[RMDB]
RNA sequence: GGGAACGACUCGAGUAGAGUCGAAAAUACUACUUGAAGGACAUUGCCAGCAGAGGAAAAUACCUUUUCGCGGACGACAUUGCUGGAUGGGACACAAAAAUUAGCGCGGAGGAUCUGGAGGAUGAGAGUCCCAUUAGGAUUUCGAUCCUAAUGGGACAAAAGAAACAACAACAACAAC
Reactivity to 2A3 in 0.01 (KOAc 150mM, MgCl2 10mM, bicine 150mM(pH8.5), 24C), signal-to-noise 1, nucleotides 027 to 126: u070a010c030u010a000c000u000u120g080a080a000g020g000a030c010a040u020u150g080c040c010a030g000c070a000g030a090g040g120a040a090a070a030u260a130c010c000u020u080u030u090c140g040c060g040g020a030c000g010a010c000a080u000u080g010c010u010g040g000a060u110g010g020g080a010c010a010c010a130a050a040a100a260u090u120a010g010c010g060c010g090g020a060g010g000a030u040c010u080g010g030a010g060g020a060u090g060a070g010a000
Reactivity to DMS in 0.01 (KOAc 150mM, MgCl2 10mM, bicine 150mM(pH8.5), 24C), signal-to-noise 2, nucleotides 027 to 126: u010a130c030u000a030c050u010u020g000a120a110g020g010a110c080a080u000u020g020c030c050a070g010c050a070g020a090g000g010a060a060a060a150u010a080c060c060u000u000u020u010c100g030c110g010g010a050c070g020a060c120a090u020u000g000c030u000g000g020a070u000g020g010g000a080c090a040c090a050a040a010a070a100u010u020a070g020c080g000c080g000g010a090g000g000a030u000c050u010g000g000a060g000g020a080u010g020a120g010a140